[RMDB]
RNA sequence: GGGAACGACUCGAGUAGAGUCGAAAAAAAAGAUAUGGAUCGAAUAGGAGAAGUGGUCAAAAUACAUCGGAAACGAUGUAUGAACCGGCCAUGUGCCUUCGGGAACUCCUACGAUCCUAAGUCAAAAUCUGCUUAAUCAGUUCGCUGAUUAAGCAGAAAAAGAAACAACAACAACAAC
Reactivity to DMS in 0.01 (KOAc 150mM, MgCl2 10mM, bicine 150mM(pH8.5), 24C), signal-to-noise 2, nucleotides 027 to 126: a030a050a220a140g000a020u000a100u020g000g000a000u010c000g020a100a250u000a020g000g000a020g000a270a170g050u000g000g020u000c000a070a120a210a010u000a000c020a010u010c000g000g000a010a000a040c010g010a010u000g000u010a010u000g010a060a160c280c190g000g010c000c000a000u050g020u020g010c020c000u010u020c250g070g010g020a030a100c000u000c010c000u010a110c100g000a010u000c000c000u000a010a070g000u010c020a120a040a080a080